The record gives the reactivity of an RNA of 177 nucleotides to DMS. The RNA was probed in 150 mM KOAc, 10 mM MgCl2 and 150 mM bicine (pH 8.5) at 24 C.

[RMDB]
RNA sequence: GGGAACGACUCGAGUAGAGUCGAAAAUUUUACUAUCUUUUUAAAGCAACGCCGUUUGAAUAAACGUGUUAAGUCCGAACUAAUCGCAUUGGAUACCAAAAGUUGGCUGAUGUCGGCGUGUAUCAGCGUCGAAAAGAGUGUUCGCACUCUUUUCGACAAAAGAAACAACAACAACAAC
Reactivity to DMS in 0.01 (KOAc 150mM, MgCl2 10mM, bicine 150mM(pH8.5), 24C), signal-to-noise 1, nucleotides 027 to 126: u010u000u010u000a100c040u000a060u000c000u080u000u000u000u000a050a180a190g000c130a070a010c070g040c030c050g030u020u010u000g050a060a150u020a040a030a040c030g000u010g010u000u000a040a090g010u010c010c010g020a040a180c130u000a080a090u030c120g000c140a130u010u000g000g000a050u000a160c020c030a050a020a030a110g030u020u000g010g020c060u010g000a030u000g010u000c030g030g030c090g090u000g020u000a030u000c010a060g000c040